[RMDB]
RNA sequence: GGGAACGACUCGAGUAGAGUCGAAAACUACGUCUUAUGCGUCAAAAGUGGAGUUAUCUGAGAAUUUGACGUCAUCUCUAACCUUUACAGUCCAUUUUAAACCGUCAGCACUAAUUGAAUAGUUAGAGGUAAUCCCUCGUUUCGACGAGGGAUUACCAAAAGAAACAACAACAACAAC
Reactivity to 2A3 in 0.01 (KOAc 150mM, MgCl2 10mM, bicine 150mM(pH8.5), 24C), signal-to-noise 2, nucleotides 027 to 126: c000u060a070c020g040u010c020u060u250a020u160g060c040g000u000c020a000a050a040a080g060u110g040g000a000g050u280u110a260u130c040u050g070a060g100a060a140u090u090u110g070a070c030g010u060c000a090u000c040u010c000u030a090a110c020c000u060u060u100a020c060a000g050u000c040c010a020u000u000u280u150a070a030a080c010c010g130u040c150a000g030c040a000c020u120a130a220u000u010g070a080a000u070a180g070u100u090a070g000a020
The record gives the reactivity of an RNA of 177 nucleotides to 2A3. It was measured as part of the RMDB library OK1LIB. For 2A3, 794 sequencing reads were counted. For 2A3 the reverse transcriptase was SuperScript II with manganese. The reactions ran in a buffer of 150 mM KOAc, 10 mM MgCl2 and 150 mM bicine (pH 8.5), at 24 C.